[RMDB]
RNA sequence: GGGAACGACUCGAGUAGAGUCGAAAAUUGGAACUGUGGUGAUGCUUCCCUGGAGACGGGAUGCGGCGUCAGGCACUGGAGCUUAGCCCCAGACGGAAGGUGGUGUGGGCAGGGGUGCCACGCUGCCCUACGGGGAACGGUUCGCCGUUCCCCGUAGAAAAGAAACAACAACAACAAC
Reactivity to DMS in 0.01 (KOAc 150mM, MgCl2 10mM, bicine 150mM(pH8.5), 24C), signal-to-noise 3, nucleotides 027 to 126: u020u010g010g010a040a100c100u010g020u000g010g020u010g020a060u000g010c090u000u000c010c010c000u010g010g000a130g020a140c130g010g020g010a090u010g010c070g010g000c030g000u010c110a090g010g010c040a060c020u010g000g030a130g000c020u000u020a300g020c040c010c020c030a140g010a150c160g000g020a090a080g010g040u000g030g020u000g030u000g000g020g020c000a100g010g000g010g020u010g020c020c010a040c030g000c000u010g010c010c120
Reactivity to 2A3 in 0.01 (KOAc 150mM, MgCl2 10mM, bicine 150mM(pH8.5), 24C), signal-to-noise 2, nucleotides 027 to 126: u030u040g080g040a020a030c020u070g010u090g110g010u060g050a040u080g030c040u080u040c010c000c000u030g070g010a100g000a090c040g030g020g020a060u160g050c000g020g020c000g010u060c110a080g040g000c030a010c040u020g070g050a070g000c000u100u110a020g000c020c030c000c000a050g070a110c060g130g090a080a060g100g030u160g000g060u070g000u120g010g040g000c030a030g110g030g000g000u030g030c030c010a010c000g000c010u010g000c010c040